[RMDB]
RNA sequence: GGGAACGACUCGAGUAGAGUCGAAAAUGCGGGCAGCCCGUUGGCAGGAGGCGUGAGGAAUCCGUCUCUCUGUCUGGUGCGGCAAGGUAGUUCUGGGUCCUUAGGGGCUCCACCUUCACCGCUGUUAGGGGAGUUUUAUCCAGCGUCAGCAAAGGUGCACAUUAACUUCCUUCGGGAAGUUAAUGUGAAAAGAAACAACAACAACAAC
Reactivity to 2A3 in 0.01 (KOAc 150mM, MgCl2 10mM, bicine 150mM(pH8.5), 24C), signal-to-noise 1, nucleotides 027 to 156: u150g000c030g020g020g000c030a030g010c020c000c020g120u060u130g000g000c000a000g000g010a000g000g000c020g130u300g010a030g080g200a100a130u020c000c000g000u000c000u000c010u020c000u000g000u000c020u060g010g030u080g020c060g000g000c030a030a010g040g000u060a060g070u070u120c240u140g040g000g070u020c030c010u090u060a120g050g000g000g000c000u000c000c000a030c020c010u070u040c100a120c190c070g000c040u000g070u030u200a040g000g000g010g080a060g000u000u010u130u240a040u150c060c010a010g010c060g040u030c060a000g000c050a090a000a000g080g000u060g000
This 207-nucleotide RNA was probed chemically with 2A3. Reactivities are rounded to 0.1 and cut off at 0 and 3. The reactions ran in a buffer of 150 mM KOAc, 10 mM MgCl2 and 150 mM bicine (pH 8.5), at 24 C. It was measured as part of the RMDB library ARCHII.